RNA sequence: GGGAACGACUCGAGUAGAGUCGAAAAUUGCGCCUCCGAUUCGCCGUCGGCAUUUCCCCAGCAGCCAUGACCUACCAGGCUGCGGUGCCGCUCGCCGCACAGGUCAUCCCUCAUCGGGCGCGUCCUGGAUAGGGCUAUACUUUCGAGUAUAGCCCAAGUCAUAGUUUGUAUUCGUACAAACUAUGACAAAAGAAACAACAACAACAAC
Reactivity to 2A3 in 0.01 (KOAc 150mM, MgCl2 10mM, bicine 150mM(pH8.5), 24C), signal-to-noise 3, nucleotides 027 to 156: u120u130g010c010g010c020c070u110c050c020g030a070u120u100c050g020c030c010g030u070c020g020g000c020a040u090u080u080c040c020c000c020a020g000c010a000g010c020c040a200u110g070a190c010c040u100a140c140c010a040g020g010c040u000g000c000g000g000u030g010c000c020g030c020u070c020g030c040c000g010c050a050c030a060g030g000u070c030a110u130c050c000c000u040c040a080u080c040g020g030g000c000g000c010g010u070c010c010u040g060g000a160u110a210g020g000g020c000u010a000u010a000c000u000u160u100c170g020a000g000u010a010u000a040g020c030c000c000a000a000
Reactivity to DMS in 0.01 (KOAc 150mM, MgCl2 10mM, bicine 150mM(pH8.5), 24C), signal-to-noise 1, nucleotides 027 to 156: u000u000g030c010g000c000c040u000c060c030g000a120u000u000c070g020c070c020g030u030c070g000g010c030a100u000u000u000c020c050c070c000a120g010c030a030g040c060c020a140u000g000a180c070c060u000a140c110c090a150g010g000c010u010g070c000g010g030u000g000c030c060g000c110u010c070g030c020c010g000c150a060c030a050g040g000u040c030a070u010c000c020c000u000c080a130u000c120g000g040g060c000g010c050g020u000c020c000u000g000g020a280u000a070g020g060g020c010u000a000u000a010c000u010u000u000c190g020a100g040u020a010u000a050g030c000c000c000a000a010
The data come from the RNA Mapping Database (RMDB), library M2RFPK. Chemical mapping of a 207-nucleotide RNA with 2A3 and DMS. Conditions: 150 mM KOAc, 10 mM MgCl2 and 150 mM bicine (pH 8.5), 24 C. DMS (dimethyl sulfate) methylates the pairing face of unpaired adenines and cytosines. The 2A3 profile rests on 1,816 reads. 2A3 adducts were read by reverse transcription with SuperScript II with manganese.